[RMDB]
An RNA of 207 nucleotides, treated with DMS and 2A3 and read out base by base. Reactivities are given for positions 27 through 156. The data come from the RNA Mapping Database (RMDB), library OK3TST. DMS adducts were read by reverse transcription with MarathonRT. For DMS, 2,112 sequencing reads were counted.
RNA sequence: GGGAACGACUCGAGUAGAGUCGAAAAAACGUGCGCGUAAGCAAAGUUGAUAAUUUCAAUGUCUUGUUGCAUAGUGUUUGUGUGUUUGGCGACAAAAGAUAGAAAUGCCGAAGGCACAUUACCUCGCAAAUUAAUCAAUUCUUUCGCAUAGAAAACACCGAUGAAUUAUAUUCGUAUAAUUCAUCGGAAAAGAAACAACAACAACAAC
Reactivity to DMS in 0.01 (KOAc 150mM, MgCl2 10mM, bicine 150mM(pH8.5), 24C), signal-to-noise 2, nucleotides 027 to 156: a100a090c080g010u000g040c000g050c110g000u000a090a020g040c170a110a140a080g020u000u000g020a070u010a050a040u020u000u000c060a090a140u010g010u000c050u000u000g010u010u000g020c000a120u010a120g010u010g000u040u020u020g050u010g020u000g020u000u020u000g010g020c060g000a120c090a000a030a030a060g030a220u010a160g010a050a060a220u020g020c050c060g060a080a080g000g020c000a020c060a000u000u060a060c030c030u010c120g030c060a030a030a130u000u000a100a160u010c010a060a150u010u000c050u000u000u000c020g020c000a160u010a200g000a080a050a090a030c050a130
Reactivity to 2A3 in 0.01 (KOAc 150mM, MgCl2 10mM, bicine 150mM(pH8.5), 24C), signal-to-noise 4, nucleotides 027 to 156: a000a000c050g010u040g000c060g000c020g060u040a020a000g000c060a110a030a080g030u010u000g020a030u010a040a050u030u080u060c110a140a090u080g080u090c090u100u180g120u160u090g030c040a070u070a080g070u090g050u130u010u030g000u000g010u000g150u010u000u030g000g000c020g020a040c050a030a130a050a010g080a040u170a090g120a070a080a030u150g000c020c010g010a020a020g040g020c000a010c000a010u020u110a020c010c010u000c030g040c040a030a050a060u050u070a060a110u050c020a010a030u090u080c010u040u030u030c020g000c010a020u100a150g100a050a150a020a020c040a010